[RMDB]
RNA sequence: GGGAACGACUCGAGUAGAGUCGAAAACAGGGCUGGCACAGCGUGUCCGCCCACUGCCACCUGUGGGUUCCAGGAGGGCCCAGCCCCUGUGCUGAUGCCCACCACCUUCUCAGCUCAUGUCUGGGGACACAAUUGUGCUCUUCGGAGCACAAUUGUGAAAAGAAACAACAACAACAAC
Reactivity to 2A3 in 0.01 (KOAc 150mM, MgCl2 10mM, bicine 150mM(pH8.5), 24C), signal-to-noise 1, nucleotides 027 to 126: c090a100g000g050g000c050u020g010g000c000a020c020a100g160c070g120u110g040u070c030c000g000c010c000c000a020c000u050g050c000c050a130c050c040u080g000u150g070g060g000u140u080c030c030a040g030g020a100g000g000g000c080c060c010a020g000c080c040c000c040u020g020u120g010c030u080g000a300u170g060c010c000c070a020c010c020a050c020c030u050u050c000u040c020a020g020c070u040c210a060u200g140u030c000u030g000g000g000g070a000
Reactivity to DMS in 0.01 (KOAc 150mM, MgCl2 10mM, bicine 150mM(pH8.5), 24C), signal-to-noise 1, nucleotides 027 to 126: c150a120g010g060g030c070u020g000g010c020a010c050a100g010c240g020u010g020u010c200c080g020c000c040c000a040c120u000g000c020c030a070c030c080u000g010u010g030g010g020u000u000c120c010a040g000g010a110g000g000g010c030c130c040a160g000c060c020c140c080u010g000u000g020c050u000g000a020u010g020c010c000c000a230c050c030a060c130c060u020u050c020u000c020a030g010c080u020c190a140u000g000u000c000u000g030g020g010g000a120
Source information
The record gives the reactivity of an RNA of 177 nucleotides to 2A3 and DMS. The reactions ran in a buffer of 150 mM KOAc, 10 mM MgCl2 and 150 mM bicine (pH 8.5), at 24 C. 2A3 adducts were read by reverse transcription with SuperScript II with manganese. DMS adducts were read by reverse transcription with MarathonRT.